[RMDB]
RNA sequence: GGGAACGACUCGAGUAGAGUCGAAAACUACGCCCACCUCUUCCGUCUCGCCCGAACCUGGGAGGGGCCGAAGCCUCGUGUGGUGCUCUUCAUGGCCUACCACGGGGGCGAGCCGCUCGCGGGCAACUCAAGCCCAUCUUUUCGAAGAUGGGCUUGAAAAAGAAACAACAACAACAAC
Reactivity to 2A3 in 0.01 (KOAc 150mM, MgCl2 10mM, bicine 150mM(pH8.5), 24C), signal-to-noise 1, nucleotides 027 to 126: c000u080a090c050g030c000c000c000a020c020c020u050c010u090u040c070c040g060u010c000u000c060g040c010c010c020g030a140a150c080c020u040g050g190g000a060g030g020g010g000c000c000g050a130a040g050c010c010u050c000g040u000g040u050g050g020u170g010c040u000c010u150u080c110a260u300g000g000c000c020u030a030c020c140a010c010g000g010g000g040g030c000g020a020g000c000c030g110c090u000c010g110c000g070g010g000c000a000a000c010
Reactivity to DMS in 0.01 (KOAc 150mM, MgCl2 10mM, bicine 150mM(pH8.5), 24C), signal-to-noise 2, nucleotides 027 to 126: c090u000a120c130g020c010c010c020a210c060c070u000c000u000u000c030c060g000u000c010u000c090g010c010c030c050g020a130a100c060c010u000g000g000g000a060g000g030g000g040c010c060g000a140a130g020c020c020u000c000g000u000g000u010g000g010u010g000c000u020c140u000u030c300a100u010g010g000c020c050u000a070c090c010a030c020g030g000g040g020g010c020g010a130g010c020c040g010c030u000c030g000c060g000g000g000c090a050a080c130